[RMDB]
RNA sequence: GGGAACGACUCGAGUAGAGUCGAAAACGCUGCUGUUCGCACUGUUAAUGAUGCAAGGUGCAUUACCCCUGAAUCCGGAAAAUAUGCCGGGGAUGUCGUGGCAUCUGGCGCUGAAUACAGCGGUCAGCCUGAGCAAAUUCUUCGGAAUUUGCUCAGGAAAAGAAACAACAACAACAAC
Reactivity to DMS in 0.01 (KOAc 150mM, MgCl2 10mM, bicine 150mM(pH8.5), 24C), signal-to-noise 2, nucleotides 027 to 126: c040g020c040u010g000c140u000g010u000u000c020g010c000a020c040u020g000u010u000a080a100u000g000a050u010g010c020a100a180g010g000u020g010c040a080u000u000a140c030c030c020c060u000g000a120a150u000c030c050g010g000a060a030a110a170u020a120u010g030c050c060g000g000g020g000a050u030g010u000c050g050u000g020g020c000a010u000c010u000g020g000c020g010c010u000g020a100a090u000a000c030a000g020c020g010g030u000c040a070g000
Reactivity to 2A3 in 0.01 (KOAc 150mM, MgCl2 10mM, bicine 150mM(pH8.5), 24C), signal-to-noise 2, nucleotides 027 to 126: c000g020c020u080g000c060u070g040u070u040c020g020c010a050c040u050g050u240u250a210a110u250g070a040u080g040c040a130a060g080g020u040g040c030a050u050u180a160c010c010c010c000u020g060a050a090u050c040c040g070g080a070a120a010a140u300a160u240g070c000c000g000g000g000g000a000u050g010u100c080g030u100g140g020c000a000u040c030u060g080g040c000g020c030u020g010a050a010u090a040c000a000g020c000g000g030u000c010a020g080